[RMDB]
RNA sequence: GGGAACGACUCGAGUAGAGUCGAAAAAUGGUGGUGCAUGCCUGUAGUCCUGGCUACUUGGGAGGCUGAGGCAGGAGGAUCGCUUGAGCCCAGGAGUUUGAGGCUGCAUUGAGCUAUGCUUGCACGACUGCACUCCAGCCUGGGUGACAGAGCAAGAAUUGAUAGAGUAAUUCGUUACUCUAUCAAUAAAAGAAACAACAACAACAAC
Reactivity to DMS in 0.01 (KOAc 150mM, MgCl2 10mM, bicine 150mM(pH8.5), 24C), signal-to-noise 3, nucleotides 027 to 156: a090u010g010g030u020g020g020u010g010c060a070u000g020c040c010u000g010u010a080g020u000c010c020u020g020g010c000u010a030c040u000u000g000g020g020a100g020g020c040u000g020a070g020g040c050a040g010g000a110g000g000a080u000c050g000c030u010u000g010a270g040c010c000c020a070g000g010a070g010u000u000u000g010a080g010g030c010u010g040c040a140u010u000g000a090g030c030u000a090u000g020c040u000u000g020c040a110c020g000a100c030u010g000c020a060c020u000c020c020a090g010c020c030u010g010g000g030u000g010a090c050a060g000a090g020c030a070a100g000a110
Reactivity to 2A3 in 0.01 (KOAc 150mM, MgCl2 10mM, bicine 150mM(pH8.5), 24C), signal-to-noise 4, nucleotides 027 to 156: a010u130g030g020u040g000g020u050g030c060a060u090g010c000c010u040g040u060a040g030u010c020c020u040g040g000c020u070a070c050u150u120g030g020g020a050g060g000c030u040g000a010g070g000c050a020g000g030a030g010g030a050u070c060g000c050u030u040g020a010g000c010c000c010a030g000g030a110g040u060u110u140g040a020g020g020c070u010g000c040a080u060u120g010a020g010c030u090a060u190g050c000u000u100g000c050a040c120g160a080c040u030g000c030a050c090u020c020c000a020g020c000c010u020g000g000g000u020g020a030c030a020g060a020g020c020a030a030g080a110